[RMDB]
The data come from the RNA Mapping Database (RMDB), library OK3TST. Structure probing data (DMS and 2A3) for a 207-nucleotide construct. The RNA was probed in 150 mM KOAc, 10 mM MgCl2 and 150 mM bicine (pH 8.5) at 24 C.
RNA sequence: GGGAACGACUCGAGUAGAGUCGAAAAGUCUGAAACCAUUUGUGGGCAUCGCUGCUUGCGGGUUGGUUGGAAGGCGGUUUUGGGGCUCAACGCCGCCUGCGCGGUGUAUGACCACGUUGUUACGUUCGACAUCAUUCUGCCGUGCGCCGCGCGGACCAGCAGGAUUAGAAUUCGUUCUAAUCCUGCUAAAAGAAACAACAACAACAAC
Reactivity to DMS in 0.01 (KOAc 150mM, MgCl2 10mM, bicine 150mM(pH8.5), 24C), signal-to-noise 1, nucleotides 027 to 156: g040u000c060u000g010a200a070a120c010c040a120u000u000u000g030u010g040g010g020c000a070u000c140g030c150u000g020c030u000u000g070c060g020g000g030u010u010g060g000u000u010g020g010a120a100g020g040c010g040g030u000u000u000u010g030g020g000g020c010u000c050a060a190c050g030c030c000g030c000c020u020g010c070g040c000g010g060u000g000u010a030u000g010a040c000c120a110c120g050u000u000g000u000u010a090c090g010u000u010c020g060a070c040a030u010c070a180u000u000c090u000g050c020c020g020u010g000c000g010c000c020g060c010g000c010g000g010a080c080c040
Reactivity to 2A3 in 0.01 (KOAc 150mM, MgCl2 10mM, bicine 150mM(pH8.5), 24C), signal-to-noise 1, nucleotides 027 to 156: g000u040c070u120g050a060a040a070c070c000a050u050u020u150g010u020g030g030g000c000a040u040c060g040c090u040g010c030u100u190g020c000g010g010g030u120u300g120g000u100u080g060g080a140a040g070g080c140g000g000u120u120u130u240g010g020g070g010c040u020c090a050a020c020g040c010c010g000c000c010u030g000c000g000c010g000g000u000g020u020a060u040g010a040c030c000a010c050g000u040u040g010u000u060a050c130g000u020u100c110g010a070c030a080u140c020a080u160u140c070u130g010c000c000g080u080g000c090g050c080c010g000c010g000c000g000g000a020c000c010